Conditions: 150 mM KOAc, 10 mM MgCl2 and 150 mM bicine (pH 8.5), 24 C.
An RNA of 177 nucleotides, treated with DMS and 2A3 and read out base by base.
Values are in units of 0.01, from 0 to 300, in steps of 10.
High DMS reactivity at an A or C suggests that its Watson-Crick edge is free.
2A3 adducts were read by reverse transcription with SuperScript II with manganese.
High 2A3 reactivity points to a flexible backbone, as in loops and unpaired stretches.

RNA sequence: GGGAACGACUCGAGUAGAGUCGAAAAUUGUUACUGCAGACUAUGCUGUGAAAGUACCUGAAAAAUUAGAUCCAGCAGCAGCGUCUUCUAUUACAUGCGCAGGUGUGACAACUUAUAAAGCUGUAAAGUUACGAGAGACUUUCGAGUCUCUCGUAACAAAAGAAACAACAACAACAAC
Reactivity to DMS in 0.01 (KOAc 150mM, MgCl2 10mM, bicine 150mM(pH8.5), 24C), signal-to-noise 2, nucleotides 027 to 126: u020u000g010u000u000a050c040u020g010c010a000g010a080c000u000a110u000g010c000u000g030u000g040a120a150a080g020u000a030c020c040u040g010a020a070a060a130a110u050u060a050g020a050u010c050c070a300g000c050a000g000c030a010g000c190g030u010c000u010u100c050u030a110u020u000a000c040a030u050g000c000g000c020a030g010g060u010g050u000g000a180c100a070a100c060u000u010a100u050a080a080a090g010c050u000g000u000a010a050a110
Reactivity to 2A3 in 0.01 (KOAc 150mM, MgCl2 10mM, bicine 150mM(pH8.5), 24C), signal-to-noise 3, nucleotides 027 to 126: u060u010g020u030u080a080c060u070g000c020a060g000a040c020u130a030u090g020c000u000g010u060g030a160a070a050g050u050a120c030c010u050g170a210a100a040a040a000u280u170a060g000a040u040c110c050a010g000c000a000g000c000a000g000c070g000u000c000u040u060c020u040a120u100u120a040c010a050u160g000c130g000c050a000g110g010u100g010u020g030a070c030a060a040c010u130u080a110u080a300a150a060g030c000u000g090u140a090a180a170